[RMDB]
An RNA of 177 nucleotides, treated with DMS and 2A3 and read out base by base. The RNA was probed in 150 mM KOAc, 10 mM MgCl2 and 150 mM bicine (pH 8.5) at 24 C. 2A3 adducts were read by reverse transcription with SuperScript II with manganese. The data come from the RNA Mapping Database (RMDB), library M2PK50.
RNA sequence: GGGAACGACUCGAGUAGAGUCGAAAACAUGGAUCGUUCGCGAUCCAUGGCAGGUGGUGGUGGGACCAGCCGACCCAGGCUAUUGGCAUCCCAGCCUUUCCAAUCCAGCCUAUUUCGAUAGGCUGAAGUCCAUGGAACAAUUCGUUGUUCCAUGGACAAAAGAAACAACAACAACAAC
Reactivity to DMS in 0.01 (KOAc 150mM, MgCl2 10mM, bicine 150mM(pH8.5), 24C), signal-to-noise 2, nucleotides 027 to 126: c000a000u010g000g000a000u000c000g040u000u010c230g010c000g020a000u000c000c000a000u000g000g010c140a050g010g020u010g000g040u000g020g000u010g000g000g000a150c050c020a080g020c030c020g000a150c090c110c060a150g010g000c060u000a050u010u020g010g030c090a120u000c030c000c010a160g010c020c010u000u000u000c050c020a140a180u000c110c000a000g000c000c000u000a000u000u010u020c210g000a010u000a010g000g000c000u010g000a040a030
Reactivity to 2A3 in 0.01 (KOAc 150mM, MgCl2 10mM, bicine 150mM(pH8.5), 24C), signal-to-noise 2, nucleotides 027 to 126: c010a000u000g010g000a000u000c030g000u080u060c240g000c020g110a000u000c000c000a000u000g000g020c070a020g000g130u110g040g040u080g040g270u080g040g060g000a040c010c010a010g040c000c010g090a150c030c030c040a030g000g000c020u070a090u190u200g000g000c020a080u030c020c010c000a020g040c000c020u030u010u010c000c050a010a030u030c050c010a000g030c010c000u030a020u030u130u050c170g060a020u010a030g000g000c000u000g000a010a010